RNA sequence: GGGAACGACUCGAGUAGAGUCGAAAAUGGUCUUCCUGGGUCAAAAGUUCAGGUUUUAUGGGAAUCCCGAACUUGGUUCCUUGUGUUCUUGAAAAUCGGAGGAGAAAUACAGCUGUAAUUACUAUCCCAACCGUAGUCACUUCGGUGACUACGGUUGAAAAGAAACAACAACAACAAC
Reactivity to DMS in 0.01 (KOAc 150mM, MgCl2 10mM, bicine 150mM(pH8.5), 24C), signal-to-noise 1, nucleotides 027 to 126: u010g000g010u000c060u000u000c020c020u010g020g000g020u010c060a030a060a060a050g020u000u000c010a060g000g010u000u000u000u010a060u010g010g000g000a090a050u000c010c030c050g040a040a030c020u000u010g010g030u000u000c010c020u000u010g020u000g020u010u000c050u000u000g000a090a050a030a100u020c090g000g040a080g010g000a050g010a070a050a080u000a040c070a100g010c070u000g000u010a030a040u000u000a060c080u000a140u000c010c030
Background: Structure probing data (DMS) for a 177-nucleotide construct. The RNA was probed in 150 mM KOAc, 10 mM MgCl2 and 150 mM bicine (pH 8.5) at 24 C. DMS (dimethyl sulfate) methylates the pairing face of unpaired adenines and cytosines.